RNA sequence: GGGAACGACUCGAGUAGAGUCGAAAAGAAAACGGACGGCUGACGUUCGGUCAGCAAAAGAAACCAUCAUGUGUAAUGAUGAUACACGAAAGAAAGCCUACUCUGACAGUGGGAGUCAGUAAAGAAAGGGUAAGAUAGACUUCGGUCUAUCUUACCCAAAAGAAACAACAACAACAAC
Reactivity to 2A3 in 0.01 (KOAc 150mM, MgCl2 10mM, bicine 150mM(pH8.5), 24C), signal-to-noise 3, nucleotides 027 to 126: g030a040a030a090a080c070g100g060a000c000g060g020c030u050g040a040c000g280u300u180c050g060g000u020c000a000g000c070a050a000a050a000g040a080a030a000c080c040a000u000c010a000u010g060u020g190u300a100a000u080g030a010u000g020a000u040a050c120a000c050g060a110a050a090g050a030a110a000g010c040c000u000a020c060u000c000u000g010a010c030a040g030u220g020g090g060a000g000u020c070a040g000u220a000a040a010g040a100a090a010
Reactivity to DMS in 0.01 (KOAc 150mM, MgCl2 10mM, bicine 150mM(pH8.5), 24C), signal-to-noise 2, nucleotides 027 to 126: g000a060a060a060a090c020g020g000a120c180g020g000c000u000g000a020c020g010u030u000c270g000g020u030c000a000g020c090a010a120a110a050g000a170a120a150c260c000a000u000c030a000u000g000u010g000u020a130a050u010g000a090u020g010a100u070a060c160a070c100g020a050a090a140g000a030a090a170g060c010c020u000a080c180u000c050u030g020a040c120a060g000u000g000g000g000a120g000u000c010a040g000u020a060a100a130g000a080a080a140